[RMDB]
RNA sequence: GGGAACGACUCGAGUAGAGUCGAAAAACGAGCUGUACGCAGCUCGACAUUAUUACUUUUGGUACGCGCUAGGCCAGACUCAAACUCGUACCGUGAGUAAUAAUGCAACGGCCUCUACGGAGGCCGACGCCUAGGACUAAUUCGUUAGUCCUAGGCGAAAAGAAACAACAACAACAAC
Reactivity to DMS in 0.01 (KOAc 150mM, MgCl2 10mM, bicine 150mM(pH8.5), 24C), signal-to-noise 2, nucleotides 027 to 126: a090c040g000a000g050c010u020g040u030a100c130g040c000a000g020c000u010c000g000a120c000a000u000u000a000u000u000a000c010u000u000u020u020g000g020u000a000c000g010c140g000c060u000a300g000g000c080c190a070g040a140c140u010c040a050a130a300c020u000c010g000u000a000c000c000g000u010g000a000g000u010a020a000u000a000a000u020g000c090a040a190c030g000g000c000c000u000c000u000a110c130g020g020a000g000g000c000c030g020a040
Reactivity to 2A3 in 0.01 (KOAc 150mM, MgCl2 10mM, bicine 150mM(pH8.5), 24C), signal-to-noise 7, nucleotides 027 to 126: a000c010g000a000g010c000u000g030u060a040c280g020c080a000g000c000u000c000g010a010c000a010u000u000a000u000u000a010c000u010u000u030u200g000g000u000a000c000g020c020g010c080u070a030g030g080c050c100a100g070a300c050u050c150a050a080a060c020u010c010g000u000a000c010c010g000u010g000a000g000u000a000a010u000a000a000u010g020c010a080a030c000g000g000c020c000u000c000u020a080c270g080g000a000g010g000c000c000g000a000